[RMDB]
RNA sequence: GGGAACGACUCGAGUAGAGUCGAAAACAGGAAGCUACGGCUUCCUGAGCUGCAGCGGUGACGCUGCAGCAAGGUAUGGCGUGAGCCAUACCACAAGUACGCGUGAGCGUACUUGACAGCGCGACGUGAGUCGCGCUGAACCGUCCACGUUCGCGUGGACGGACGUCGCCGUUCGCGGCGACGAAGUUAAGUCGUGAGACUUAACACUAGGCACGGUGACGUGCCUAGAAAAGUGUUUUCAUGUCCACUUAAAUCGAACAUGAACUACGCAAUGGUUCGCCAUUGCGAAAAGAAACAACAACAACAAC
Reactivity to 2A3 in 0.01 (KOAc 150mM, MgCl2 10mM, bicine 150mM(pH8.5), 24C), signal-to-noise 4, nucleotides 027 to 266: c000a000g010g000a000a010g000c010u040a050c300g090g000c000u040u000c000c000u000g000a020g000c000u000g000c000a000g000c010g000g040u050g010a020c010g000c000u000g000c000a000g000c000a000a000g000g000u000a000u000g000g020c040g040u090g040a010g010c000c000a000u000a000c000c000a010c000a000a000g000u000a000c000g030c030g040u110g100a080g020c000g010u000a000c000u000u000g010a020c000a000g000c000g020c010g010a010c040g130u170g110a070g000u030c000g000c000g000c000u000g000a010a020c000c000g010u000c000c000a010c000g030u060u060c240g040c010g120u010g000g000a000c000g000g000a000c010g000u000c010g000c000c000g020u040u070c220g030c000g070g010c000g000a000c000g000a080a000g000u000u000a000a000g000u000c020g050u040g110a060g000a030c000u000u000a010a000c020a020c020u000a000g010g000c000a000c010g020g060u090g070a030c000g010u000g000c000c000u000a010g000a000a050a000a000g000u010g000u010u000u010u010c000a000u000g010u000c010c000a020c050u170u300a020a020a020u080c030g000a020a000c000a000u000g000a010a010c060u080a010